Conditions: 150 mM KOAc, 10 mM MgCl2 and 150 mM bicine (pH 8.5), 24 C. This 207-nucleotide RNA was probed chemically with DMS and 2A3. Reactivities are given for positions 27 through 156. Reactivities are rounded to 0.1 and cut off at 0 and 3.

[RMDB]
RNA sequence: GGGAACGACUCGAGUAGAGUCGAAAAACAGCGAAAGGCACAAGACUUUGAACAUUAUAGCAGUUAGUAGUUGCCUAAACCCAUUGCAAUAUAUGGGACAGUAGAGGUCGCAAGCCUAUACUGUGCGAAAAGUCGCAAGGUUUCGACCUUGCGACAACUAAAUGAUCUCUUUCGAGAGAUCAUUUAGAAAAGAAACAACAACAACAAC
Reactivity to DMS in 0.01 (KOAc 150mM, MgCl2 10mM, bicine 150mM(pH8.5), 24C), signal-to-noise 3, nucleotides 027 to 156: a060c050a100g040c060g010a080a090a060g000g010c040a090c070a100a140g020a100c010u000u000u000g010a190a100c060a140u000u010a120u000a100g000c050a120g030u010u000a110g010u000a080g010u000u010g000c010c030u000a060a070a160c000c000c000a010u000u000g030c080a160a140u000a140u000a020u000g000g010g030a100c010a020g010u000a030g000a030g090g050u000c050g050c250a080a200g000c010c020u000a060u000a000c000u000g020u000g020c060g000a080a100a050a110g030u010c000g000c000a010a010g030g000u000u000u000c280g020a050c000c000u010u000g020c010g010a000c030a010a020
Reactivity to 2A3 in 0.01 (KOAc 150mM, MgCl2 10mM, bicine 150mM(pH8.5), 24C), signal-to-noise 6, nucleotides 027 to 156: a010c030a000g040c020g060a150a060a000g020g020c020a010c030a070a050g080a040c050u140u120u150g060a110a050c050a150u220u190a140u240a150g100c080a020g020u040u100a020g020u050a020g020u100u050g020c010c000u050a100a050a040c010c000c000a000u000u030g000c020a040a000u010a000u010a000u110g000g010g010a000c000a000g000u000a000g000a000g010g020u150c050g040c200a060a010g010c000c000u000a000u000a010c010u000g000u000g010c000g010a040a020a030a050g000u000c000g000c000a000a000g020g010u020u110u210c190g060a050c000c000u000u000g000c000g000a000c000a000a000